[RMDB]
RNA sequence: GGGAACGACUCGAGUAGAGUCGAAAAGGGCUGUUCGCCCAUUAAAGUGGCACGCGAGCUGGGUUCAGAACGUCGUGAGACAGUUCGGUCUCUAUCUGUAGUGGGCGUUGGAAUUUUGAGUGGACCUCACGGUUUACCAAUUCGUUGGUAAACCGUGAAAAGAAACAACAACAACAAC
Reactivity to DMS in 0.01 (KOAc 150mM, MgCl2 10mM, bicine 150mM(pH8.5), 24C), signal-to-noise 1, nucleotides 027 to 126: g010g000g000c040u010g010u000u030c030g010c000c000c000a050u020u010a030a110a020g000u000g000g020c300a010c110g020c030g000a070g020c010u040g000g010g030u010u060c020a000g030a040a130c100g010u020c020g080u030g020a080g000a020c000a050g010u000u020c040g000g000u010c050u000c040u030a080u000c010u000g000u000a060g050u080g000g000g000c110g040u000u000g000g040a030a110u010u050u000u040g000a070g000u000g010g000a090c120c090u000
Reactivity to 2A3 in 0.01 (KOAc 150mM, MgCl2 10mM, bicine 150mM(pH8.5), 24C), signal-to-noise 2, nucleotides 027 to 126: g000g010g010c090u060g060u090u040c020g000c020c000c000a000u020u030a020a050a000g030u030g030g030c110a010c050g230c050g000a010g020c010u060g000g170g020u110u100c020a020g020a080a020c040g120u090c040g090u100g020a020g040a030c030a040g000u000u100c000g030g030u020c040u000c000u040a230u060c020u000g080u010a020g020u070g000g000g000c010g000u000u000g050g020a090a100u090u090u040u050g110a090g000u050g020g040a090c000c000u020

Conditions: 150 mM KOAc, 10 mM MgCl2 and 150 mM bicine (pH 8.5), 24 C. Chemical mapping of a 177-nucleotide RNA with DMS and 2A3.